[RMDB]
RNA sequence: GGGAACGACUCGAGUAGAGUCGAAAAACGUGUCCGAUGUAGCUAGUGUGGAGUAUAACAAAAAUAUCUUCUAUCAAUAAUUCCGAAAUGCGGACGGACAAGUAGAUUUAUGCAGUUAUAUGGUACAAACUAAGAAUAUACUAAGGAUGGGCCAGUACAGUAUGGAUCGAUUCGUCGAUCCAUACUGAAAAGAAACAACAACAACAAC
Reactivity to 2A3 in 0.01 (KOAc 150mM, MgCl2 10mM, bicine 150mM(pH8.5), 24C), signal-to-noise 2, nucleotides 027 to 156: a000c040g110u120g010u040c010c000g010a030u110g040u090a000g060c070u030a050g020u020g020u070g060g010a090g000u000a010u010a070a060c060a080a100a040a090a040u110a020u080c020u170u010c020u030a020u040c070a120a130u050a140a090u160u110c020c020g050a030a190a060u170g120c030g000g040a010c020g020g000a050c040a020a020g030u010a000g020a000u020u090u020a050u100g050c000a000g000u050u000a060u010a030u130g020g030u090a030c020a040a020a010c040u020a080a000g020a110a060u130a000u020a080c010u020a050a000g010g020a020u040g000g110g000c030c000a010g030u060a060
Reactivity to DMS in 0.01 (KOAc 150mM, MgCl2 10mM, bicine 150mM(pH8.5), 24C), signal-to-noise 1, nucleotides 027 to 156: a010c030g000u000g000u000c000c000g020a170u010g030u000a050g000c020u000a010g020u000g120u000g010g030a300g020u000a010u030a020a060c000a020a020a080a220a040u000a030u000c020u000u000c000u000a260u010c000a040a110u000a070a110u000u000c030c020g000a060a080a050u000g020c020g010g020a010c140g030g010a000c190a030a130g030u000a090g000a040u000u000u000a040u020g040c080a150g000u010u000a050u000a030u000g010g000u000a070c030a010a030a110c090u010a020a160g010a050a100u000a090u000a060c000u030a060a180g030g010a070u000g000g050g000c040c070a030g010u030a150
An RNA of 207 nucleotides, treated with 2A3 and DMS and read out base by base. Conditions: 150 mM KOAc, 10 mM MgCl2 and 150 mM bicine (pH 8.5), 24 C. DMS adducts were read by reverse transcription with MarathonRT. Source: RMDB library OK3TST, as collected in RNAgym. For DMS, 1,424 sequencing reads were counted.